[RMDB]
RNA sequence: GGGAACGACUCGAGUAGAGUCGAAAAAUGCCGCAUUCAGAGACGGUAACUCUAGUGGGCCACUGUCAAUCUAGCGUUGACAUCUACAUACUAUAUAGUAAUACCAAUACUCAAGACUACGAAACGGACUAUGAUGAGCAUUCGUGCUCAUCAUAGUAAAAGAAACAACAACAACAAC
Reactivity to DMS in 0.01 (KOAc 150mM, MgCl2 10mM, bicine 150mM(pH8.5), 24C), signal-to-noise 4, nucleotides 027 to 126: a070u030g000c010c000g000c110a120u010u000c160a100g000a050g020a100c100g000g000u030a060a080c100u000c040u000a050g050u010g030g000g050c010c090a110c140u020g000u000c020a010a020u000c020u030a080g000c160g000u000u000g000a000c020a040u000c110u050a110c140a140u020a030c130u040a100u000a100u030a030g000u000a010a050u010a090c050c080a030a030u010a080c050u010c020a030a040g010a100c100u000a040c120g020a060a090a120c070g000g000
Reactivity to 2A3 in 0.01 (KOAc 150mM, MgCl2 10mM, bicine 150mM(pH8.5), 24C), signal-to-noise 7, nucleotides 027 to 126: a000u160g020c030c000g100c040a040u100u080c070a010g020a000g010a080c050g010g020u080a120a070c020u020c010u040a020g020u050g010g040g000c030c020a040c060u050g000u020c010a010a020u010c020u090a050g020c050g110u010u020g010a030c000a030u040c040u080a100c030a110u100a060c050u050a060u070a060u100a220g100u100a080a040u030a100c030c000a030a060u060a070c030u040c040a010a100g050a080c050u060a060c130g120a130a050a030c040g030g020
This 177-nucleotide RNA was probed chemically with DMS and 2A3. Reactivities are given for positions 27 through 126.